[RMDB]
RNA sequence: GGGAACGACUCGAGUAGAGUCGAAAAUCAUCAAGAAGUGGGCUUAGGCCAAUUGCUUGGUGGUGAAAGUAGAGGGAAGGUAGCACUUCGACGCCUCUAAGUACGCUGUGGGAGUAGUGCUUAAAUCAAAAGCACAGCGACUUCGGUCGCUGUGCAAGUAGAUUUGUUGGUUCGCCAACAAAUCUACAAAAGAAACAACAACAACAAC
Reactivity to DMS in 0.01 (KOAc 150mM, MgCl2 10mM, bicine 150mM(pH8.5), 24C), signal-to-noise 1, nucleotides 027 to 156: u000c020a030u000c030a040a000g000a050a060g030u010g010g030g020c000u000u030a150g070g000c010c020a010a010u000u000g000c010u000u010g000g020u000g000g080u000g000a060a120a170g050u020a030g010a030g050g010g010a130a070g030g020u000a100g070c100a110c060u000u000c000g090a070c120g010c030c050u000c060u030a030a150g000u010a080c080g000c010u000g050u000g010g010g020a230g010u000a030g040u000g030c000u020u010a050a040a170u000c090a090a100a130a180g000c000a030c000a030g000c000g050a010c030u000u000c300g090g010u000c000g050c000u000g020u010g010c000a000a010
Reactivity to 2A3 in 0.01 (KOAc 150mM, MgCl2 10mM, bicine 150mM(pH8.5), 24C), signal-to-noise 3, nucleotides 027 to 156: u020c000a000u010c000a000a040g020a030a010g080u130g000g060g010c020u100u150a130g150g000c030c000a040a100u090u090g070c010u010u010g000g000u010g020g000u050g020a090a070a010g060u090a020g030a020g000g060g020a030a030g000g010u070a010g030c060a020c050u040u050c050g050a050c050g090c020c000u000c020u040a060a020g050u030a000c030g000c100u070g010u070g100g000g010a080g020u100a020g000u020g020c010u040u120a060a070a070u180c110a060a050a000a050g000c000a000c000a000g000c010g000a000c000u020u040c130g080g000u010c000g020c000u000g000u000g000c000a000a000
Record summary
Chemical mapping of a 207-nucleotide RNA with DMS and 2A3. The data come from the RNA Mapping Database (RMDB), library M2RFPK. For 2A3 the reverse transcriptase was SuperScript II with manganese. Reactivities are rounded to 0.1 and cut off at 0 and 3. Conditions: 150 mM KOAc, 10 mM MgCl2 and 150 mM bicine (pH 8.5), 24 C. Values cover nucleotides 27 to 156.